The record gives the reactivity of an RNA of 207 nucleotides to 2A3. 2A3 adducts were read by reverse transcription with SuperScript II with manganese.
RNA sequence: GGGAACGACUCGAGUAGAGUCGAAAAAGUGGAAAGCAUAUCCCCUGCACACCAGGAGAUAUGCCUGCACAGAUCAACAAGCAGGAUGUUAAAAUGGAAGAGAGUGUUCUGGGAGGGAGGACUAAUGGCCCCAGCCAUGAUGGAGGCUCUGCUUCCAUCCUCGACUGGUCUUCGGACCAGUCGAGGAAAAAGAAACAACAACAACAAC
Reactivity to 2A3 in 0.01 (KOAc 150mM, MgCl2 10mM, bicine 150mM(pH8.5), 24C), signal-to-noise 1, nucleotides 027 to 156: a010g020u000g010g010a080a010a000g000c000a000u000a020u080c060c000c000c010u030g020c270a140c070a150c150c000a010g010g000a020g000a000u000a000u000g010c000c000u120g030c010a040c030a000g070a110u160c070a050a100c000a020a030g060c000a010g070g040a010u000g030u130u190a050a080a060a050u080g000g000a000a000g000a000g010a000g030u030g080u100u080c000u030g000g000g010a120g070g080g000a100g000g030a050c010u100a120a000u080g000g010c000c010c030c000a000g100c000c070a080u160g010a060u120g000g010a000g040g000c020u000c000u180g050c000u000u000c000c000a010